[RMDB]
RNA sequence: GGGAACGACUCGAGUAGAGUCGAAAACCCCGCACCUUCGGGUGCGGGGAACUACCGAGAAUGCGACUCGCUAUAUACGCAAAACCCUUGGAAACAAGGGAAUUCACGAACAGUUCGCUGUUCGUAAGAAAUGGUAGUAGUUCGCUACUACCAUUUCAAAAGAAACAACAACAACAAC
Reactivity to 2A3 in 0.01 (KOAc 150mM, MgCl2 10mM, bicine 150mM(pH8.5), 24C), signal-to-noise 3, nucleotides 027 to 126: c000c000c010c000g050c010a030c020c020u070u110c300g150g010g000u010g020c080g000g000g020g020a010a030c020u060a040c000c020g010a050g120a070a020u010g000c000g010a010c010u000c010g000c010u000a000u010a010u010a050c110g020c060a060a060a050a130c000c000c000u000u000g000g010a030a050a020c000a000a000g000g000g030a000a010u080u070c060a010c010g000a000a000c000a010g020u050u070c170g060c080u000g000u000u010c000g000u020a020a060
Reactivity to DMS in 0.01 (KOAc 150mM, MgCl2 10mM, bicine 150mM(pH8.5), 24C), signal-to-noise 4, nucleotides 027 to 126: c000c000c000c020g020c000a020c000c000u010u020c260g050g010g020u000g010c020g000g010g000g010a000a010c050u000a140c030c010g000a130g000a020a030u000g000c000g000a050c010u000c000g000c030u000a010u000a010u010a070c240g020c170a070a060a080a180c000c000c000u000u000g000g010a170a090a160c000a010a010g000g010g000a030a030u000u010c090a100c000g000a010a000c000a010g000u010u000c210g010c000u000g010u000u010c010g010u010a050a110